[RMDB]
RNA sequence: GGGAACGACUCGAGUAGAGUCGAAAACAACAUGGCCAAAAAUAGGCGCUUUAAGCGACAGAGCAACAGACUUAUGUACUACCUUACACACGAAGAGUGUCACAUUCAAGAAUACUUGUAGGAAUGGCUACCAAUACGAUUUCGAUCGUAUUGGUAGAAAAGAAACAACAACAACAAC
Reactivity to 2A3 in 0.01 (KOAc 150mM, MgCl2 10mM, bicine 150mM(pH8.5), 24C), signal-to-noise 9, nucleotides 027 to 126: c050a010a020c020a110u130g070g000c020c030a060a060a020a030a070u190a160g060g000c020g030c020u090u150u130a120a030g030c010g060a050c030a050g070a020g060c030a020a070c010a050g100a090c020u110u110a060u160g030u030a040c020u040a040c000c010u080u090a040c060a000c010a010c070g060a060a070g060a040g070u040g010u030c010a030c000a080u090u100c030a050a020g060a190a050u120a210c070u090u120g040u090a040g030g110a080a050u080g070g000
Reactivity to DMS in 0.01 (KOAc 150mM, MgCl2 10mM, bicine 150mM(pH8.5), 24C), signal-to-noise 7, nucleotides 027 to 126: c090a090a100c110a070u020g000g010c030c050a040a060a050a110a120u030a080g010g030c030g000c030u000u010u020a090a090g010c030g020a070c090a050g000a080g000c060a080a090c150a050g000a070c050u010u010a050u020g010u010a070c070u000a070c040c020u000u030a020c120a080c030a050c080g000a040a060g010a070g000u010g010u010c060a060c070a040u000u000c060a030a100g000a100a110u020a060c130u010u010g010u000a040g000g010a030a020u020g000g000